The record gives the reactivity of an RNA of 177 nucleotides to DMS and 2A3. Source: RMDB library RFM100, as collected in RNAgym. DMS adducts were read by reverse transcription with MarathonRT.
RNA sequence: GGGAACGACUCGAGUAGAGUCGAAAAACUCAGCUCACUACGGUGAGCUGAGAGCUGAUGCUUUAUAUAGAUCUUACAGGUUCCGGAACCUGGACGGCAGGGCUUUUUGCCCUGCCUGGUACAUAAAGACUUGGUAUCUGUUCGCAGAUACCAAGUCAAAAGAAACAACAACAACAAC
Reactivity to DMS in 0.01 (KOAc 150mM, MgCl2 10mM, bicine 150mM(pH8.5), 24C), signal-to-noise 2, nucleotides 027 to 126: a210c010u020c020a000g000c010u030c000a010c000u000a050c240g040g010u000g000a030g020c000u040g000a010g000a060g000c080u020g020a050u020g020c050u010u000u010a060u010a160u000a080g000a080u040c030u020u010a150c030a050g000g000u000u010c110c200g000g000a050a100c000c010u000g000g000a210c200g010g010c000a000g000g000g000c000u000u020u030u040u020g000c030c050c000u020g010c000c000u000g010g000u030a020c130a090u000a070a060a080
Reactivity to 2A3 in 0.01 (KOAc 150mM, MgCl2 10mM, bicine 150mM(pH8.5), 24C), signal-to-noise 3, nucleotides 027 to 126: a000c000u010c000a000g000c030u010c010a050c000u050a030c260g140g000u000g000a000g030c000u000g030a000g020a000g010c070u180g020a160u210g030c050u100u240u010a130u040a030u060a130g100a070u050c020u010u070a020c040a000g040g000u070u220c090c060g120g050a010a040c000c000u000g090g000a000c000g000g000c000a000g000g030g000c000u010u050u020u280u300g000c010c000c000u000g000c000c000u000g000g010u020a000c010a020u200a100a090a000